[RMDB]
Source: RMDB library 15KREP, as collected in RNAgym. Structure probing data (DMS and 2A3) for a 177-nucleotide construct.
RNA sequence: GGGAACGACUCGAGUAGAGUCGAAAAUGCUACAAGUUCGUCCUUUGGGAUUAUGAACGUAGCAAUAUUUAUGGUACUGCUACUAUUGGUGUAUGUAAGUACACUGAUAUUGAUGUUAAUUCAGCUUAUCUUAGGGUAAGUUCGCUUACCCUAAGAUAAAAGAAACAACAACAACAAC
Reactivity to DMS in 0.01 (KOAc 150mM, MgCl2 10mM, bicine 150mM(pH8.5), 24C), signal-to-noise 2, nucleotides 027 to 126: u010g020c030u020a150c020a050a120g000u000u000c010g010u000c000c000u000u000u020g050g030g000a010u010u010a020u020g020a010a010c040g010u010a010g000c000a020a040u000a030u000u000u010a100u010g010g010u010a050c080u010g010c060u010a040c050u000a000u000u000g010g000u010g000u000a010u000g000u010a110a150g020u000a000c010a000c000u000g010a010u000a000u000u010g000a140u000g020u000u010a090a190u010u000c050a090g010c160u000u000
Reactivity to 2A3 in 0.01 (KOAc 150mM, MgCl2 10mM, bicine 150mM(pH8.5), 24C), signal-to-noise 3, nucleotides 027 to 126: u020g000c010u010a010c000a150a090g000u010u000c000g020u010c020c000u040u090u210g200g000g000a040u080u050a090u300g000a000a010c000g000u010a000g000c000a000a010u100a060u050u160u060a140u110g110g030u070a050c060u070g110c020u010a030c010u000a090u040u040g000g020u020g000u010a020u040g120u080a100a100g000u000a000c000a010c000u020g000a020u020a060u060u140g050a080u060g010u090u080a100a060u130u100c000a020g020c080u000u010
About this RNA:
For DMS the reverse transcriptase was MarathonRT. The RNA was probed in 150 mM KOAc, 10 mM MgCl2 and 150 mM bicine (pH 8.5) at 24 C. For DMS, 2,442 sequencing reads were counted.